[RMDB]
RNA sequence: GGGAACGACUCGAGUAGAGUCGAAAACUUAUCAUCAGGUAUCAGUAGUAUUCCACUAUUCAUUACUGCUUGGAUCACUUCUGGCCUCAUAGAAUCUAGAACACCCACCGUCCAGAUUACUAGACUGCGAUCGCCAAGCAUUCGUGCUUGGCGAUCGAAAAGAAACAACAACAACAAC
Reactivity to 2A3 in 0.01 (KOAc 150mM, MgCl2 10mM, bicine 150mM(pH8.5), 24C), signal-to-noise 1, nucleotides 027 to 126: c050u110u180a000u060c080a000u000c020a000g000g000u050a020u080c000a000g030u020a000g000u000a080u000u070c000c000a000c110u000a000u140u110c160a090u180u290a040c090u000g140c100u100u030g040g040a050u020c020a000c130u090u040c000u000g100g000c000c080u050c000a000u020a000g000a030a100u030c020u000a000g040a220a000c000a180c000c000c000a000c030c030g110u000c000c000a000g000a050u080u000a190c000u010a060g030a160c090u120g000
Record summary: An RNA of 177 nucleotides, treated with 2A3 and read out base by base. Values cover nucleotides 27 to 126. The RNA was probed in 150 mM KOAc, 10 mM MgCl2 and 150 mM bicine (pH 8.5) at 24 C.